[RMDB]
RNA sequence: GGGAACGACUCGAGUAGAGUCGAAAAGCUGGUAACGCAAAAAUCACGCGUGCAGAAAUAUCACCGACUAGACAACGUUUCUCCAGAUCCUGAGAACGAAUCAAUGCCGGAUGAAACGCAGUAUGCGAUGGCGGCAAUGGAUGGCGAGCCGAUCGCCUCAUGACAUCAGUUUCGACUGAUGUCAUGAAAAAGAAACAACAACAACAAC
Reactivity to DMS in 0.01 (KOAc 150mM, MgCl2 10mM, bicine 150mM(pH8.5), 24C), signal-to-noise 4, nucleotides 027 to 156: g030c030u000g000g020u000a100a090c030g010c020a020a090a100a110a100u010c080a090c050g020c010g050u010g000c060a100g000a080a070a110u000a080u000c030a060c020c010g020a060c010u000a290g010a080c020a060a080c010g020u000u000u010c010u000c010c060a120g000a090u000c050c030u000g010a130g010a040a100c060g010a170a110u010c020a050a110u000g010c020c010g010g010a090u000g000a070a050a070c090g000c020a090g010u000a070u000g000c040g020a130u000g020g000c000g000g010c080a060a120u000g050g010a070u000g020g030c020g020a100g010c060c120g010a110u010c010g010c020c050
Reactivity to 2A3 in 0.01 (KOAc 150mM, MgCl2 10mM, bicine 150mM(pH8.5), 24C), signal-to-noise 8, nucleotides 027 to 156: g040c030u040g040g140u160a100a050c030g000c060a060a060a050a030a080u200c060a040c100g010c010g000u040g020c030a010g100a080a100a010u200a050u110c040a020c050c000g030a040c040u050a010g020a050c020a090a030c060g010u030u110u050c010u010c010c010a040g020a200u040c020c010u070g010a030g010a070a020c040g020a010a030u070c040a060a050u110g010c010c010g030g010a060u080g090a080a080a010c020g010c020a030g100u170a060u170g020c020g020a030u030g060g020c000g000g000c020a050a110u100g050g030a040u070g010g000c000g000a020g090c080c050g100a070u030c010g010c000c000